[RMDB]
RNA sequence: GGGAACGACUCGAGUAGAGUCGAAAAAUUAUUGCUCUGGAAUAGUGACUGAUGCAAAUGGGUUCGUACUAUACAGAAGGAUACCGAUACCAGAUGCUGUUUUACGCGCAUUGAUCAAUUUUAGUAACCCCAGGUAUUAGUUCGCUAAUACCUGGGGAAAAGAAACAACAACAACAAC
Reactivity to DMS in 0.01 (KOAc 150mM, MgCl2 10mM, bicine 150mM(pH8.5), 24C), signal-to-noise 2, nucleotides 027 to 126: a040u000u000a010u000u000g010c050u000c010u010g000g020a060a040u000a050g010u010g020a040c000u000g000a090u010g000c110a040a080a160u000g030g010g020u000u000c060g010u000a130c090u000a120u020a130c120a070g000a150a060g010g010a100u000a080c070c010g010a060u000a050c050c050a080g030a100u000g020c040u000g000u020u000u000u030a030c270g020c110g010c060a080u010u010g000a030u010c070a050a020u000u000u000u010a090g010u010a090a140
Reactivity to 2A3 in 0.01 (KOAc 150mM, MgCl2 10mM, bicine 150mM(pH8.5), 24C), signal-to-noise 1, nucleotides 027 to 126: a000u130u030a000u050u080g000c000u030c010u000g000g000a080a000u020a060g000u030g070a040c010u070g010a070u020g070c130a050a190a100u080g000g000g000u000u080c000g000u030a010c030u030a060u030a100c030a060g110a210a040g110g010a030u120a180c000c050g060a030u060a120c010c010a010g030a080u030g020c010u030g060u020u180u050u100a040c050g060c000g020c040a000u000u080g040a030u070c030a040a070u120u090u080u280a050g050u050a010a040